An RNA of 207 nucleotides, treated with 2A3 and read out base by base. 2A3 adducts were read by reverse transcription with SuperScript II with manganese.

[RMDB]
RNA sequence: GGGAACGACUCGAGUAGAGUCGAAAACUGAGAUACUUUAAGAUCUUCGGGGGUGAAGGUGAUUUCAGCAACAUUCUCAAACUCUCUAGUCAUAUAGAGAAAGGUAUUGGCUCUAGUUGUGAGAGCCAGUAGCUCCUCAUCUGGAGACCAAGCGGCAGACGAGUAGGAAUUUCGAUUCCUACUCGUCAAAAGAAACAACAACAACAAC
Reactivity to 2A3 in 0.01 (KOAc 150mM, MgCl2 10mM, bicine 150mM(pH8.5), 24C), signal-to-noise 2, nucleotides 027 to 156: c050u030g010a020g010a040u140a110c010u110u140u220a150a060g030a190u110c120u130u100c130g010g000g000g000g000u060g020a020a010g050g000u060g030a080u000u030u040c040a040g000c060a040a060c030a100u060u000c060u000c030a080a140a120c020u050c000u000c000u000a020g060u100c100a080u090a010u030a160g000a000g050a040a050a010g100g000u110a100u160u030g000g000c000u000c020u010a060g000u000u030g030u030g080a150g020a000g120c000c000a010g020u020a020g000c000u010c000c020u020c010a120u000c060u060g010g000a010g020a020c020c010a000a000g190c020g060g000c040a010